RNA sequence: GGGAACGACUCGAGUAGAGUCGAAAAGCGUACUACUCCGUGCUUAGCGAGGGUACGUAACCUAUCCCAAAUAGGAUAGGGAUAAGUACCUACCCACCGCUAAGAACUACACGGAGUAUCGCAAACUUCGAUAGAUACUUCGGUAUCUAUCGAAGAAGCUUAAUGAAUCCUUCGGGAUUCAUUAAGCAAAAGAAACAACAACAACAAC
Reactivity to DMS in 0.01 (KOAc 150mM, MgCl2 10mM, bicine 150mM(pH8.5), 24C), signal-to-noise 1, nucleotides 027 to 156: g000c010g000u010a040c050u000a020c000u010c010c010g050u010g020c000u000u000a040g000c000g000a130g010g010g030u000a000c010g000u000a060a220c000c010u000a000u000c030c010c010a070a240a200u010a090g010g010a020u000a060g020g010g010a060u010a070a200g050u000a050c000c000u000a010c030c000c010a300c130c010g000c050u000a020a040g030a070a150c010u000a240c050a010c070g030g020a000g000u000a000u010c050g040c010a070a090a120c000u000u000c010g000a000u000a030g000a020u000a000c000u000u010c300g070g010u030a010u030c010u000a010u010c010g010a010a000g000a080a140
Reactivity to 2A3 in 0.01 (KOAc 150mM, MgCl2 10mM, bicine 150mM(pH8.5), 24C), signal-to-noise 3, nucleotides 027 to 156: g000c010g100u110a060c040u000a000c000u010c000c000g030u020g000c000u000u000a000g010c000g010a040g020g000g000u000a010c010g000u010a010a010c010c000u000a000u010c020c010c030a190a290a050u300a080g000g000a000u000a000g000g000g000a000u010a030a000g000u000a000c000c000u040a080c040c060c040a070c060c000g000c000u000a000a000g010a020a000c170u220a060c080a000c010g000g000a010g000u000a000u020c000g000c000a020a050a060c000u000u000c000g000a000u000a000g000a000u010a000c000u020u020c120g020g000u000a000u020c000u000a000u010c000g000a000a000g000a000a000

The record gives the reactivity of an RNA of 207 nucleotides to DMS and 2A3. For 2A3 the reverse transcriptase was SuperScript II with manganese. The DMS profile rests on 2,335 reads. The reactions ran in a buffer of 150 mM KOAc, 10 mM MgCl2 and 150 mM bicine (pH 8.5), at 24 C. For 2A3, 4,564 sequencing reads were counted.